[RMDB]
RNA sequence: GGGAACGACUCGAGUAGAGUCGAAAAGUAGUGCGCCACGGUCGGCAUCGUUCAGUGGUGAGCCCACUGCCUGCUCAUCACCAUGCAAGCUGGCGAUGGAUGAGCUCAGUGUGUGGUGGCGGGCUGACUAGCUCACGAUGUUCGCAUCGUGAGCUAGAAAAGAAACAACAACAACAAC
Reactivity to DMS in 0.01 (KOAc 150mM, MgCl2 10mM, bicine 150mM(pH8.5), 24C), signal-to-noise 2, nucleotides 027 to 126: g020u000a050g010u010g000c060g020c050c010a020c050g010g010u000c050g010g010c160a050u000c030g000u000u000c060a070g030u000g000g010u000g000a100g010c020c020c010a060c030u000g010c050c010u000g020c010u000c000a020u000c020a060c100c010a030u010g000c100a120a120g040c120u010g010g020c070g000a090u000g020g000a080u000g000a050g000c010u000c140a110g030u020g000u010g030u010g010g020u000g010g030c060g000g000g060c020u010g000a100
Reactivity to 2A3 in 0.01 (KOAc 150mM, MgCl2 10mM, bicine 150mM(pH8.5), 24C), signal-to-noise 2, nucleotides 027 to 126: g110u140a000g050u040g120c040g010c000c000a020c020g000g080u040c030g040g110c090a110u190c030g090u180u160c080a070g020u010g030g030u040g040a030g020c040c010c000a020c010u020g000c000c000u000g000c020u030c020a040u020c000a020c000c000a010u040g030c040a050a120g100c060u110g100g000c060g080a080u150g140g080a150u100g050a020g000c080u110c090a060g010u020g030u050g030u020g120g000u000g000g010c030g040g000g000c030u000g000a030
Structure probing data (DMS and 2A3) for a 177-nucleotide construct. The RNA was probed in 150 mM KOAc, 10 mM MgCl2 and 150 mM bicine (pH 8.5) at 24 C. For 2A3, 2,786 sequencing reads were counted. It was measured as part of the RMDB library OK2TST. DMS (dimethyl sulfate) methylates the pairing face of unpaired adenines and cytosines.